Chemical mapping of a 177-nucleotide RNA with 2A3 and DMS. For DMS, 1,139 sequencing reads were counted. The data come from the RNA Mapping Database (RMDB), library OK2TRN. 2A3 is a SHAPE reagent: it acylates the 2'-hydroxyl of flexible nucleotides of all four kinds. The reactions ran in a buffer of 150 mM KOAc, 10 mM MgCl2 and 150 mM bicine (pH 8.5), at 24 C.
[RMDB]
RNA sequence: GGGAACGACUCGAGUAGAGUCGAAAAGACGUGACUCAUGUCACCGGACGGGUCGAUCCCCAGUCCGACAUUGAGGUCGUCGAGACCGAGCUGAUCCUGGCAGAUCUGCAAACCCUGGAGCGGGCCAUCACAUCGCACAGUUCGCUGUGCGAUGUGAAAAAGAAACAACAACAACAAC
Reactivity to 2A3 in 0.01 (KOAc 150mM, MgCl2 10mM, bicine 150mM(pH8.5), 24C), signal-to-noise 1, nucleotides 027 to 126: g010a010c040g030u090g220a110c020u120c150a040u100g020u020c050a040c090c040g000g010a020c010g000g000g000u170c130g120a140u130c030c000c000c000a090g000u010c000c000g010a010c000a010u040u190g000a020g040g030u020c020g020u030c030g020a030g000a010c020c040g010a030g000c000u020g010a040u060c020c010u000g030g000c030a020g010a110u020c000u080g000c050a080a000a180c020c000c010u030g040g020a040g000c040g000g000g000c030c000a030
Reactivity to DMS in 0.01 (KOAc 150mM, MgCl2 10mM, bicine 150mM(pH8.5), 24C), signal-to-noise 2, nucleotides 027 to 126: g020a010c030g020u000g020a120c010u000c060a070u000g010u000c080a150c300c130g010g000a100c010g010g000g030u000c100g020a140u020c220c030c000c030a110g020u000c000c000g030a020c100a000u000u000g000a060g040g000u020c030g000u000c030g020a170g000a090c060c000g000a180g010c030u010g000a050u020c040c030u000g030g060c090a100g010a050u020c040u000g000c070a090a060a150c050c030c020u000g010g000a090g000c030g000g000g000c020c120a070